[RMDB]
RNA sequence: GGGAACGACUCGAGUAGAGUCGAAAAAAAUGGUGCUGGUAAUGGUAUGGCUGUUACAAACGGUGUCGAAGCUAACACACAACAGGACUCUUAUGGUGGUGCUUCAGUUUGUAUUUAUUGCAGAUGCCAUGUUGAACAUCCUGCUAUUGAUGGAUUACAAAAGACGACGAUUCGUCGUCGUCUUUUGAAAAGAAACAACAACAACAAC
Reactivity to DMS in 0.01 (KOAc 150mM, MgCl2 10mM, bicine 150mM(pH8.5), 24C), signal-to-noise 2, nucleotides 027 to 156: a080a090a080u000g010g000u000g020c010u000g030g010u000a060a060u000g020g000u000a070u000g010g020c030u000g040u000u000a130c080a030a060a090c020g030g060u000g040u000c060g010a060a110g010c030u000a060a090c050a090c040a080c040a060a090c070a090g000g010a100c120u010c080u000u000a110u000g020g030u010g040g010u000g030c070u000u010c050a090g000u000u000u090g000u010a050u000u000u000a080u020u000g010c000a080g010a060u010g010c010c020a060u000g000u000u000g010a170a090c040a070u000c040c020u030g020c020u000a110u010u000g000a140u020g010g010a150u000u000a180
Reactivity to 2A3 in 0.01 (KOAc 150mM, MgCl2 10mM, bicine 150mM(pH8.5), 24C), signal-to-noise 3, nucleotides 027 to 156: a000a000a000u120g050g000u060g000c020u000g000g010u090a010a050u030g010g010u020a030u060g070g000c030u070g050u100u020a050c050a010a080a020c050g060g060u060g080u170c100g050a030a000g010c020u170a280a020c060a000c030a010c030a040a160c060a060g080g080a090c100u040c010u170u140a080u230g020g000u030g000g100u090g060c010u030u010c040a030g010u000u010u030g050u030a060u000u190u010a130u140u120g010c000a010g000a040u040g030c000c000a040u040g020u020u030g040a010a000c000a050u070c060c010u030g020c030u060a070u030u030g030a020u030g010g090a050u100u060a070